[RMDB]
Chemical mapping of a 177-nucleotide RNA with DMS. The reactions ran in a buffer of 150 mM KOAc, 10 mM MgCl2 and 150 mM bicine (pH 8.5), at 24 C.

RNA sequence: GGGAACGACUCGAGUAGAGUCGAAAACGAAUAGAAUUCGUUCUAUUCGAAUGACUGCUAUAAGCAGAGUUGACUGCGCCGAGCAGAAACGGCAAAGGAAAAAGUAGCCCAGAUUCGUCUGGGCUAAACAGCACCACGAAUUCGUUCGUGGUGCUGUAAAAGAAACAACAACAACAAC
Reactivity to DMS in 0.01 (KOAc 150mM, MgCl2 10mM, bicine 150mM(pH8.5), 24C), signal-to-noise 1, nucleotides 027 to 126: c000g030a000a000u000a000g000a000a080u000u050c160g010u000u000c000u000a000u000u000c010g000a120a020u000g010a050c000u010g000c000u000a070u000a080a140g050c060a050g020a300g040u000u000g000a110c010u000g000c300g000c010c040g000a100g010c060a050g010a110a070a090c000g000g030c010a080a280a070g000g020a150a090a110a070a100g030u000a010g030c000c010c000a030g000a020u000u000c160g000u020c000u000g000g000g020c010u000a000a030